[RMDB]
RNA sequence: GGGAACGACUCGAGUAGAGUCGAAAACUGUUCUCAACUUUCUCCUGGAGAUAGGCAGCCUCACAAGAAGCCCAAGGAUAUCUGCCUGCUCUGACUCCCACUCUGAGAUGGCUGCCCUCCCUUUUCCUCAAAUUUGUUUAUUCGUAAACAAAUUUGAAAAAGAAACAACAACAACAAC
Reactivity to DMS in 0.01 (KOAc 150mM, MgCl2 10mM, bicine 150mM(pH8.5), 24C), signal-to-noise 8, nucleotides 027 to 126: c090u010g010u000u010c010u000c010a110a140c120u010u010u010c040u010c030c070u000g000g000a050g010a110u020a090g010g020c010a030g010c040c020u000c050a090c120a130a090g010a100a120g010c020c020c030a060a090g000g010a120u010a060u010c040u010g010c010c010u000g010c010u000c020u000g000a100c090u000c010c010c020a110c090u020c050u010g000a110g010a070u010g010g000c010u000g000c000c010c020u000c010c010c040u000u000u010u000c070c060
Reactivity to 2A3 in 0.01 (KOAc 150mM, MgCl2 10mM, bicine 150mM(pH8.5), 24C), signal-to-noise 9, nucleotides 027 to 126: c030u030g040u060u020c030u010c030a060a110c060u070u130u070c050u040c030c040u060g030g010a040g020a080u100a150g080g000c000a000g010c000c010u050c010a080c020a070a060g090a070a020g030c000c010c010a040a030g080g010a040u030a080u120c030u040g020c000c010u010g000c000u000c010u020g030a040c020u010c010c010c000a040c020u030c030u050g080a090g020a120u090g030g000c000u010g010c010c000c000u010c000c000c000u010u040u030u030c010c020